Description: Conditions: 150 mM KOAc, 10 mM MgCl2 and 150 mM bicine (pH 8.5), 24 C. This 177-nucleotide RNA was probed chemically with DMS.

[RMDB]
RNA sequence: GGGAACGACUCGAGUAGAGUCGAAAAGAUAUGGAAAAGAAUCCAGAUCAUAAAGAGUGUAGGGAGCUGUCGCUCGGAAACGAGCGAGUAGCUUUGAUCUACAUGAUCUGGAUUCUUUUCCUAAGUCCGUAACGUUUUAGUUCGCUAAAACGUUACGAAAAGAAACAACAACAACAAC
Reactivity to DMS in 0.01 (KOAc 150mM, MgCl2 10mM, bicine 150mM(pH8.5), 24C), signal-to-noise 2, nucleotides 027 to 126: g010a090u000a300u010g000g000a010a000a000a020g000a010a000u000c000c000a020g000a030u000c000a190u010a110a210a160g020a260g020u000g000u000a040g000g000g000a010g030c000u010g030u000c000g030c010u000c010g010g010a060a100a160c000g020a010g020c010g000a010g000u010a010g040c000u000u000u010g010a070u020c010u010a020c020a020u000g000a000u010c000u010g000g000a000u000u000c000u020u000u000u000c000c000u000a030a120g000u000c030
The DMS profile rests on 2,086 reads.